Description:
Structure probing data (DMS) for a 177-nucleotide construct. The data come from the RNA Mapping Database (RMDB), library RFMREP. Conditions: 150 mM KOAc, 10 mM MgCl2 and 150 mM bicine (pH 8.5), 24 C.

[RMDB]
RNA sequence: GGGAACGACUCGAGUAGAGUCGAAAAGCUAUCUGUAUCCUCGUCUUGUUUAAAGGCUUGUGAUAUGCUGUGGUAGUUGGGUUGCAGAAGUGCGAUAUUAAAGUAAAAGCCAUGAGUCUUUUAGGCCGAAAAAGUUCUUGUUCGCAAGAACUUUUUCAAAAGAAACAACAACAACAAC
Reactivity to DMS in 0.01 (KOAc 150mM, MgCl2 10mM, bicine 150mM(pH8.5), 24C), signal-to-noise 1, nucleotides 027 to 126: g000c030u010a030u020c050u000g020u000a040u000c010c000u000c150g020u000c000u000u000g010u000u010u020a130a040a060g020g000c000u010u000g010u010g010a040u000a030u000g010c140u000g000u000g010g020u000a010g000u000u000g020g000g000u000u000g020c040a020g010a100a110g020u010g000c040g010a060u010a050u000u000a040a050a150g030u000a020a050a040a080g020c040c050a060u010g010a090g030u010c030u000u010u000u010a100g010g010c110c110